An RNA of 207 nucleotides, treated with DMS and read out base by base.
RNA sequence: GGGAACGACUCGAGUAGAGUCGAAAACGGGGUCGGUGAAAGUCCGAACCGGCGGUUACAGUCCGCGACCCGGUCGCCUCCAGCGACCGGUUGACCAGGUGGAAUUCCUGGACCGACGGUUAAAGUCAAAAUCAUCCAACGUUCGCGUUGGAUGAAACAAAACAAACUACUUCGGUAGUUUGUUUUGAAAAGAAACAACAACAACAAC
Reactivity to DMS in 0.01 (KOAc 150mM, MgCl2 10mM, bicine 150mM(pH8.5), 24C), signal-to-noise 1, nucleotides 027 to 156: c030g000g020g030g050u000c010g000g040u020g000a080a150a300g090u000c040c010g020a050a120c040c040g040g040c000g000g000u010u010a110c050a100g130u000c010c010g000c010g030a210c300c000c070g030g000u010c030g000c010c070u000c210c150a260g000c090g030a070c010c000g020g000u000u000g000a040c010c000a020g000g070u030g000g010a300a210u000u000c010c000u000g000g000a060c070c000g040a040c060g000g000u000u010a070a110a280g000u030c040a020a000a170a180u000c000a000u000c010c010a010a010c030g020u010u040c220g040c020g070u030u000g010g000a000u000g000a010a030a140
The reactions ran in a buffer of 150 mM KOAc, 10 mM MgCl2 and 150 mM bicine (pH 8.5), at 24 C. DMS adducts were read by reverse transcription with MarathonRT.